This 207-nucleotide RNA was probed chemically with 2A3. It was measured as part of the RMDB library ARCHII.
RNA sequence: GGGAACGACUCGAGUAGAGUCGAAAAGAGUCAAACCUAAACGAGAUCGUGUGGACGCUUCGGCUUGGAGAUCGAAACACUAAAUUGAAUCAAGCUAGUUUAUUCUUCGCGUGUCUGUCCGCAGGGGGUAAAUGAAAUUAAAGACUAGACUAAACGUUCUACUGGCAUAGUUCGCUAUGCCAGUAGAAAAAGAAACAACAACAACAAC
Reactivity to 2A3 in 0.01 (KOAc 150mM, MgCl2 10mM, bicine 150mM(pH8.5), 24C), signal-to-noise 2, nucleotides 027 to 156: g050a000g040u070c060a030a100a070c000c000u100a050a090a060c150g040a020g020a220u130c090g030u030g010u010g010g020a030c020g010c020u050u030c020g080g000c010u000u000g030g000a020g000a000u110c060g040a030a040a010c040a000c050u190a080a090a130u130u250g020a010a030u040c060a030a000g000c000u020a000g010u000u030u030a010u050u020c030u140u180c040g000c000g010u000g040u000c020u000g010u000c010c000g000c050a100g000g000g020g000g000u000a030a030a000u100g020a030a020a000u180u130a090a140a000g010a010c040u090a040g000a010c050u060a070a040a050c040g000u010